[RMDB]
RNA sequence: GGGAACGACUCGAGUAGAGUCGAAAAACACUAAAAAUCAGACAAAUGUUUACUAUUUCUAGUAGUUACGUUGAUUUCAUCUCUUAAGAUUUUUCAUUCAUCUAGAAUAUAUUUUUGGUGCACGUGAGAUGUAAGUAUCUAAUCUCUCCAAAUGAAAAAUCGAUUACUAGUUCGCUAGUAAUCGAUUAAAAGAAACAACAACAACAAC
Reactivity to DMS in 0.01 (KOAc 150mM, MgCl2 10mM, bicine 150mM(pH8.5), 24C), signal-to-noise 1, nucleotides 027 to 156: a050c020a060c030u020a050a040a030a020a040u000c070a040g020a160c070a080a140a030u050g010u000u010u000a120c070u000a110u000u020u000c030u000a070g020u000a110g000u000u000a070c050g000u000u010g020a070u000u000u000c060a110u000c050u000c110u000u010a060a130g000a110u000u000u000u000u000c010a000u000u020c020a020u010c010u000a110g040a130a160u000a110u030a060u000u000u000u000u000g030g010u000g030c020a050c070g040u020g010a060g020a040u000g020u010a030a170g020u000a100u000c050u020a060a070u000c050u000c020u000c020c050a130a010a060u000g000a030a060a040
Reactivity to 2A3 in 0.01 (KOAc 150mM, MgCl2 10mM, bicine 150mM(pH8.5), 24C), signal-to-noise 2, nucleotides 027 to 156: a000c030a020c040u070a060a000a040a070a040u090c060a050g070a130c090a100a200a030u080g060u110u290u210a110c060u080a120u100u110u070c050u050a020g040u000a020g020u090u080a010c060g040u060u030g010a050u010u090u120c040a020u030c070u000c020u120u110a120a030g040a070u140u140u030u110u030c060a060u070u150c000a020u010c030u010a000g000a120a000u060a010u010a070u130u080u010u010u110g060g000u020g050c060a020c110g080u070g060a050g000a040u040g010u040a000a150g020u020a070u030c060u030a060a050u010c030u000c000u000c050c020a020a140a140u140g040a100a030a070